[RMDB]
Conditions: 150 mM KOAc, 10 mM MgCl2 and 150 mM bicine (pH 8.5), 24 C. The record gives the reactivity of an RNA of 177 nucleotides to 2A3 and DMS. It was measured as part of the RMDB libraries RFM100 and RFMREP.
RNA sequence: GGGAACGACUCGAGUAGAGUCGAAAAAUGUCCUUUUUUAGGAGGGCUUAGUUUUUUGUACCCAGUUUAAGAAUACCUUUAUCAUGUGAUUCUAAAGUAUCCAGAGAAUAUCUGUAUGCUUUGUAUAAUGGACUACCAAAUUCGUUUGGUAGUCCAUAAAAGAAACAACAACAACAAC
Reactivity to 2A3 in 0.01 (KOAc 150mM, MgCl2 10mM, bicine 150mM(pH8.5), 24C), signal-to-noise 2, nucleotides 027 to 126: a010u040g030u000c000c000u040u000u030u120u100u170a200g050g030a000g000g000g000c020u070u010a080g040u090u040u050u010u090u130g080u030a000c000c000c000a040g050u080u220u100a050a040g050a130a130u260a280c010c020u160u070u110a070u230c050a120u140g040u060g200a040u050u010c010u230a020a000a000g000u040a000u030c180c000a000g010a000g070a300a040u100a100u300c000u000g000u000a000u000g000c000u000u000u040g010u040a120u050a040
Reactivity to DMS in 0.01 (KOAc 150mM, MgCl2 10mM, bicine 150mM(pH8.5), 24C), signal-to-noise 3, nucleotides 027 to 126: a040u020g000u010c000c000u000u000u000u030u040u040a130g010g010a010g000g000g000c010u030u040a080g000u000u010u000u000u000u040g010u000a170c020c010c000a170g010u010u000u020a090a050g000a050a040u000a040c070c080u000u000u080a100u030c170a080u010g010u000g020a060u000u000c020u000a030a010a010g000u000a010u000c060c000a000g000a020g010a150a080u030a040u000c000u020g000u000a000u000g010c000u000u000u000g020u010a090u020a130